[RMDB]
The record gives the reactivity of an RNA of 177 nucleotides to DMS and 2A3. The RNA was probed in 150 mM KOAc, 10 mM MgCl2 and 150 mM bicine (pH 8.5) at 24 C. Source: RMDB library OK1LIB, as collected in RNAgym. Values cover nucleotides 27 to 126. For DMS, 825 sequencing reads were counted. For 2A3, 921 sequencing reads were counted.
RNA sequence: GGGAACGACUCGAGUAGAGUCGAAAACGUGUGCUGCGUGCAACAAAAGGACCCACAAAGUACAAGUCGGGCUCUCCAGUGCCCAUUACUGGCUGGUCCGGACCAGCUAGCCGUGCAGCCGAGCGGCCUCGAGUACGCUGUUCGCAGCGUACUCGAGAAAAGAAACAACAACAACAAC
Reactivity to DMS in 0.01 (KOAc 150mM, MgCl2 10mM, bicine 150mM(pH8.5), 24C), signal-to-noise 1, nucleotides 027 to 126: c110g030u040g090u000g030c020u000g000c150g090u040g000c300a090a160c170a140a030a010a050g000g000a060c090c080c090a050c020a000a240a100g000u000a060c040a100a250g000u000c090g000g000g000c070u040c070u000c110c080a090g000u000g020c000c040c030a080u010u000a030c130u000g000g010c110u000g050g000u010c010c030g000g000a090c070c010a070g000c060u000a030g000c050c000g010u030g000c110a100g000c160c040g010a110g000c010g000g000c060
Reactivity to 2A3 in 0.01 (KOAc 150mM, MgCl2 10mM, bicine 150mM(pH8.5), 24C), signal-to-noise 2, nucleotides 027 to 126: c000g070u050g030u050g060c040u020g030c000g000u080g100c030a080a010c050a030a240a010a010g040g020a000c000c000c000a010c030a120a130a000g040u040a070c040a120a000g020u020c050g000g010g010c000u020c000u000c000c040a010g050u000g060c000c000c060a060u030u100a070c060u020g000g010c010u020g010g000u110c070c040g060g010a020c000c030a010g030c000u050a040g040c000c000g020u040g060c030a020g000c040c000g010a000g000c000g000g020c000